[RMDB]
RNA sequence: GGGAACGACUCGAGUAGAGUCGAAAAUCUCCCUUCGGGGAGAGCUGCGCGUACUACGACGCCAUACGGUAAACGUUGAAACGUUUCCCAAAUAGGAAACGUGGAGUUUAAAUGUAUGGAACUACGUCGUAUCGCCACUGGUCCUGUUCGCAGGAAAGGUAAAAGGGAUAUUCGUAUCCCUUUUACCAAAAGAAACAACAACAACAAC
Reactivity to 2A3 in 0.01 (KOAc 150mM, MgCl2 10mM, bicine 150mM(pH8.5), 24C), signal-to-noise 4, nucleotides 027 to 156: u010c000u000c010c000c000u010u070c150g040g000g010g000a000g000a010g000c040u100g030c040g000c010g020u070a110c050u010a000c020g010a000c010g010c000c000a000u000a000c010g090g020u080a010a000a000c000g100u120u030g020a010a010a000c010g000u000u010u000c020c010c020a170a300a120u300a100g010g000a000a000a000c010g000u000g010g010a010g000u020u000u030a120a170a110u090g000u000a000u000g020g040a050a050c080u160a060c110g000u000c000g000u020a020u120c000g020c000c020a020c070u150g040g050u020c010c010u000g010u030u140c150g000c090a000g170g000a060a100a190
Reactivity to DMS in 0.01 (KOAc 150mM, MgCl2 10mM, bicine 150mM(pH8.5), 24C), signal-to-noise 3, nucleotides 027 to 156: u000c020u010c000c000c020u000u000c240g060g000g010g000a010g020a010g010c040u010g020c070g040c060g040u010a110c160u000a020c010g020a040c030g000c000c020a030u000a000c000g010g020u000a020a010a010c020g020u010u020g020a190a200a020c040g000u000u000u000c000c000c010a030a180a220u000a050g020g020a000a010a010c010g050u000g000g000a140g010u000u000u000a020a090a150u000g010u010a020u000g010g000a070a120c050u000a230c020g020u010c010g010u000a010u000c020g020c010c030a040c050u000g000g000u000c010c000u000g000u000u020c200g060c060a040g010g000a040a150a160